The record gives the reactivity of an RNA of 177 nucleotides to DMS and 2A3. DMS adducts were read by reverse transcription with MarathonRT. The reactions ran in a buffer of 150 mM KOAc, 10 mM MgCl2 and 150 mM bicine (pH 8.5), at 24 C. For DMS, 841 sequencing reads were counted. 2A3 adducts were read by reverse transcription with SuperScript II with manganese.

RNA sequence: GGGAACGACUCGAGUAGAGUCGAAAAGAAGGUCAUUUCCAACCCAUCGAUAUAUUUGCUUUUCUCAGUACCAAUACGGUUAGAAGCAAUCACUGGUACCAGAUUCGCGGCUGCAUGGCCUUGCUGACCUCAGGAGGGAAUUCGUUCCCUCCUGAGGAAAAGAAACAACAACAACAAC
Reactivity to DMS in 0.01 (KOAc 150mM, MgCl2 10mM, bicine 150mM(pH8.5), 24C), signal-to-noise 1, nucleotides 027 to 126: g000a030a060g010g030u000c020a040u000u010u040c180c050a080a060c020c010c080a070u000c080g010a100u000a050u000a080u000u010u010g020c020u010u000u020u000c010u000c060a090g030u000a060c230c120a050a110u010a050c130g020g010u000u000a020g000a070a040g000c030a020a040u000c230a040c130u000g020g020u030a020c030c050a120g000a070u030u020c110g030c280g030g050c060u040g040c220a050u000g000g000c010c000u000u000g030c040u000g000a070
Reactivity to 2A3 in 0.01 (KOAc 150mM, MgCl2 10mM, bicine 150mM(pH8.5), 24C), signal-to-noise 1, nucleotides 027 to 126: g020a000a030g020g030u050c030a040u110u060u000c050c000a000a020c000c030c040a050u080c030g040a020u000a010u030a100u270u100u100g000c010u000u010u040u020c020u000c050a030g040u060a090c020c120a080a150u080a210c080g020g000u010u010a060g030a150a030g040c070a020a010u030c050a060c100u020g000g060u140a070c000c000a060g010a170u040u040c030g010c020g050g000c010u030g000c050a020u040g000g000c000c040u010u040g090c030u060g030a040